The record gives the reactivity of an RNA of 207 nucleotides to 2A3 and DMS. Conditions: 150 mM KOAc, 10 mM MgCl2 and 150 mM bicine (pH 8.5), 24 C. 2A3 is a SHAPE reagent: it acylates the 2'-hydroxyl of flexible nucleotides of all four kinds.

RNA sequence: GGGAACGACUCGAGUAGAGUCGAAAAAUGAUAAGGGUUGUGCUAAGCGCGGAGAUAUUGGCGUGGUUAGCAAGGUUCUACAUAAUGUAGACGGCCAAUAUAAGAUUCUUUAUCAAAUUAAGUGUCCCGAUAUAGAGUUCUUUAUGGACGGAGAGAAUAGAAAUCAAUUGUUCGCAAUUGAUUUCUAAAAAGAAACAACAACAACAAC
Reactivity to 2A3 in 0.01 (KOAc 150mM, MgCl2 10mM, bicine 150mM(pH8.5), 24C), signal-to-noise 2, nucleotides 027 to 156: a020u030g000a030u010a030a000g020g000g030u080u010g010u080g020c020u010a020a010g060c040g040c060g110g060a100g030a070u150a090u100u170g050g000c010g000u020g000g180u080u040a000g010c010a000a080g030g000u070u030c010u020a020c010a060u280a140a120u300g000u010a000g050a080c050g060g000c000c010a020a000u140a000u020a130a040g010a130u200u060c000u000u080u040a000u000c010a030a070a180u130u190a170a090g070u020g010u080c000c000c000g000a020u060a020u010a110g070a010g040u080u040c030u020u290u200a100u260g030g000a000c020g020g020a030g020a010g000a010a080
Reactivity to DMS in 0.01 (KOAc 150mM, MgCl2 10mM, bicine 150mM(pH8.5), 24C), signal-to-noise 1, nucleotides 027 to 156: a130u010g000a130u010a080a020g030g000g000u000u010g010u000g060c060u020a090a150g050c080g040c090g010g040a200g040a090u010a080u010u000g020g030c040g040u010g000g000u010u000a050g060c040a060a090g020g000u000u000c010u010a010c000a210u000a100a130u000g010u010a040g000a020c090g010g040c000c030a020a080u010a040u000a040a080g000a090u000u000c040u000u010u000a050u010c000a060a100a250u000u000a080a220g010u000g010u000c000c000c030g000a130u000a090u010a100g010a130g010u000u000c050u000u010u010a110u030g010g020a010c040g010g020a110g000a170g000a130a200